[RMDB]
RNA sequence: GGGAACGACUCGAGUAGAGUCGAAAACACACUCCUUCCCCCCUGCGGGGCCCCCCCAUAAGAUGGCGAGAUCUCCACUCAUUGGGUCCUUCGUCCAUCUCCUUUUCUUACCUUUGGCCGGCAUGGUUUGACUGCCUCUUCGGAGGCAGUAAAAGAAACAACAACAACAAC
Reactivity to 2A3 in 0.01 (KOAc 150mM, MgCl2 10mM, bicine 150mM(pH8.5), 24C), signal-to-noise 2, nucleotides 027 to 129: c050a000c000a040c020u070c000c010u020u060c020c000c000c000c010c010u130g050c100g030g030g000g000c000c000c000c000c000c000c040a070u090a050a000g010a000u020g010g020c040g010a000g020a000u060c110u090c060c040a060c040u210c000a120u050u250g050g000g000u040c030c040u060u070c010g060u040c000c000a030u000c000u050c010c000u100u080u050u060c030u010u040a120c010c000u050u060u110g000g000c000c000g000g060c040a040u040g040g000u030u060u050g020
Reactivity to DMS in 0.01 (KOAc 150mM, MgCl2 10mM, bicine 150mM(pH8.5), 24C), signal-to-noise 3, nucleotides 027 to 129: c230a120c220a050c140u040c010c030u000u020c000c010c010c010c010c020u010g060c000g000g000g000g110c020c000c000c000c000c000c010a040u050a050a060g010a030u040g000g060c040g020a070g030a080u030c140u080c020c020a080c190u050c070a080u060u060g030g020g000u000c030c040u000u000c040g020u000c000c000a080u000c040u010c130c050u040u010u010u030c030u020u040a080c120c020u010u040u060g000g060c000c050g000g070c000a050u050g020g030u070u030u000g020